[RMDB]
RNA sequence: GGGAACGACUCGAGUAGAGUCGAAAAGGAUCACUCUUCGGAGUGAUCCAAACAUGGUAAACGCAGACACCAUCAAAGAUCGAAAAACGAUCAAAGCGAAAAAAACCCUCGACUUCGGUCGAGGGAACAUUGAAUAAUUCUUCGGAAUUAUUCAAUGAAAAGAAACAACAACAACAAC
Reactivity to 2A3 in 0.01 (KOAc 150mM, MgCl2 10mM, bicine 150mM(pH8.5), 24C), signal-to-noise 4, nucleotides 027 to 126: g000g010a000u020c010a000c000u010c010u050u090c270g020g000a000g000u000g000a000u020c000c000a000a000a000c040a020u010g000g000u060a070a050a020c020g020c040a020g020a050c030a010c080c000a000u040c020a060a140a050g010a000u000c010g070a150a050a060a050a160c010g010a000u000c000a020a060a010g060c030g020a090a020a000a010a020a060a090c000c000c000u000c000g000a010c000u050u070c290g040g000u000c000g000a000g000g000g010a000a000
Reactivity to DMS in 0.01 (KOAc 150mM, MgCl2 10mM, bicine 150mM(pH8.5), 24C), signal-to-noise 4, nucleotides 027 to 126: g000g010a010u010c000a000c000u000c000u000u020c180g020g000a020g020u000g000a010u000c000c000a010a050a080c150a100u000g010g010u000a030a070a080c030g000c060a070g000a300c300a020c000c010a020u000c110a050a070a100g010a010u010c000g010a060a090a060a150a160c000g010a010u000c000a070a100a220g000c050g010a000a000a050a060a060a130a120c000c000c000u000c000g010a010c000u000u020c160g010g010u000c020g000a000g000g020g000a000a010